Structure probing data (DMS and 2A3) for a 177-nucleotide construct. Reactivities are given for positions 27 through 126. The DMS profile rests on 876 reads. Conditions: 150 mM KOAc, 10 mM MgCl2 and 150 mM bicine (pH 8.5), 24 C. The data come from the RNA Mapping Database (RMDB), library M2PK50.
[RMDB]
RNA sequence: GGGAACGACUCGAGUAGAGUCGAAAACAUCAGUCGUUCGCGACUGAUGAAACGUGCAAGCGCUGCACGAAAAAGUCGAUCGUAUACCGAUCGACAAGCGCUAAAGAUAGGCCUUCGGGCCUAUCAACUUCCAGUGUCAGUUCGCUGACACUGGAAGAAAAGAAACAACAACAACAAC
Reactivity to DMS in 0.01 (KOAc 150mM, MgCl2 10mM, bicine 150mM(pH8.5), 24C), signal-to-noise 1, nucleotides 027 to 126: c020a030u010c000a000g090u000c000g020u000u000c250g110c000g000a000c000u000g000a000u000g000a060a080a150c000g060u000g000c000a090a010g010c010g010c000u020g000c010a010c000g010a020a060a030a030a030g000u000c020g030a010u020c000g000u000a240u030a120c260c000g010a010u010c000g010a000c020a010a020g000c000g000c010u000a130a090a130g000a010u010a020g010g010c000c000u000u040c240g030g020g000c000c000u010a000u010c000a010a110
Reactivity to 2A3 in 0.01 (KOAc 150mM, MgCl2 10mM, bicine 150mM(pH8.5), 24C), signal-to-noise 1, nucleotides 027 to 126: c000a010u010c000a010g040u010c020g020u050u120c240g010c020g070a000c000u030g000a000u020g010a020a000a010c010g000u000g000c010a120a060g000c000g000c030u030g000c020a000c050g160a080a100a000a000a000g000u000c000g000a000u010c000g000u040a070u050a240c160c020g000a000u000c000g000a000c000a000a000g000c010g020c000u000a000a040a000g000a010u000a000g000g000c000c050u030u070c270g030g010g030c000c000u020a000u000c000a000a010